This 177-nucleotide RNA was probed chemically with DMS and 2A3.
Source: RMDB library OK2TRN, as collected in RNAgym.

[RMDB]
RNA sequence: GGGAACGACUCGAGUAGAGUCGAAAAGUCGCCGCAUCUACAUCAACGCCCAGCGCGGGCGAGGGAGGCGUCCUACGGGGGUGACCCAUUCGCCGGCAUGGUAGAGGACCGCAAGAUUGCCUCGACGAUAUAGGUGGUAUUUCGAUACCACCUAUAUAAAAGAAACAACAACAACAAC
Reactivity to DMS in 0.01 (KOAc 150mM, MgCl2 10mM, bicine 150mM(pH8.5), 24C), signal-to-noise 8, nucleotides 027 to 126: g010u000c030g020c030c050g010c060a060u000c020u000a090c100a090u000c060a090a150c080g000c050c000c020a120g010c150g030c080g010g010g000c000g000a040g000g010g000a100g000g000c030g010u000c010c020u010a090c150g010g000g010g010g010u000g000a150c030c010c010a170u000u000c040g020c020c000g000g010c040a060u000g010g000u000a110g000a110g000g010a070c060c070g020c090a070a060g010a080u000u000g020c020c020u000c030g010a100c130g010
Reactivity to 2A3 in 0.01 (KOAc 150mM, MgCl2 10mM, bicine 150mM(pH8.5), 24C), signal-to-noise 4, nucleotides 027 to 126: g040u020c010g010c040c000g020c020a030u030c020u090a070c020a090u090c040a110a040c050g000c000c010c010a060g060c280g050c120g130g020g000c000g000a020g050g040g010a220g010g030c020g010u030c020c000u040a110c120g130g000g030g030g050u070g110a190c000c000c030a040u040u050c030g000c020c000g070g010c050a060u070g040g000u040a060g010a040g040g030a050c030c030g030c050a040a020g040a130u060u260g020c000c020u020c010g010a040c030g020